[RMDB]
RNA sequence: GGGAACGACUCGAGUAGAGUCGAAAAUUUAGCCGAGCAGCAUAUUCCGGUGCUUUUCUACGGUGAUUCAUUGGACGAACCAUUGAUUCGCGAGGCACAGCGUCAAUUAGCAGGGCUGGAUAAGCACGGCUCCAUUACUUUUCGAAGUAAUGGAGCCAAAAGAAACAACAACAACAAC
Reactivity to 2A3 in 0.01 (KOAc 150mM, MgCl2 10mM, bicine 150mM(pH8.5), 24C), signal-to-noise 2, nucleotides 027 to 126: u030u030u040a000g000c020c010g000a030g020c040a000g000c020a050u020a120u180u010c020c040g060g010u010g040c030u120u040u020u050c040u070a080c050g070g060u010g020a060u020u000c030a000u000u030g040g040a070c090g120a210a180c010c010a010u000u040g000a010u090u020c030g000c000g060a070g000g000c030a000c020a040g040c020g050u110c020a050a060u120u060a060g020c030a000g000g020g000c040u030g020g020a020u000a080a010g070c060a010c090
Reactivity to DMS in 0.01 (KOAc 150mM, MgCl2 10mM, bicine 150mM(pH8.5), 24C), signal-to-noise 2, nucleotides 027 to 126: u010u010u030a060g030c020c030g010a100g010c090a060g000c050a070u010a100u000u000c030c040g010g010u000g020c060u030u010u000u000c090u000a130c160g010g020u000g050a070u010u010c030a050u000u000g020g020a230c250g030a120a130c010c000a030u000u000g000a060u000u000c040g000c090g000a130g020g000c030a020c020a040g010c030g050u000c130a060a090u030u000a100g010c050a120g010g000g010c000u000g000g000a050u010a050a090g010c070a070c130